[RMDB]
RNA sequence: GGGAACGACUCGAGUAGAGUCGAAAAUCCUAAGUCGUCUGUCACGUAUACAUCGAUCGAAAGUUGUCAGUAUAUCGGAAACGAUAUACUUGGAUUUACUUUCGGGAGUAUACGAAGUCAGACGAUAUGGAAAAAGCGGAGAGUUCGCUCUCCGCAAGCUCUUUUUUUUGUUCGCAAAAAAAAGAGCAAAAGAAACAACAACAACAAC
Reactivity to 2A3 in 0.01 (KOAc 150mM, MgCl2 10mM, bicine 150mM(pH8.5), 24C), signal-to-noise 2, nucleotides 027 to 156: u000c000c000u000a080a030g030u010c000g000u000c000u000g010u020c000a000c040g020u000a000u050a000c130a270u070c180g200a180u140c010g000a010a000a000g020u020u020g010u010c010a020g000u000a000u000a000u010c000g030g000a060a080a050c030g000a000u000a000u000a000c010u000u110g060g010a010u090u190u210a020c000u030u000u000c010g000g000g000a000g000u000a000u000a000c010g010a080a010g010u010c000a000g010a000c000g000a000u010a020u000g040g030a080a040a000a210a000g000c010g010g010a020g020a000g020u100u180c140g030c060u010c000u010c000c000g030c030a000a000

The record gives the reactivity of an RNA of 207 nucleotides to 2A3. The reactions ran in a buffer of 150 mM KOAc, 10 mM MgCl2 and 150 mM bicine (pH 8.5), at 24 C. Reactivities are rounded to 0.1 and cut off at 0 and 3.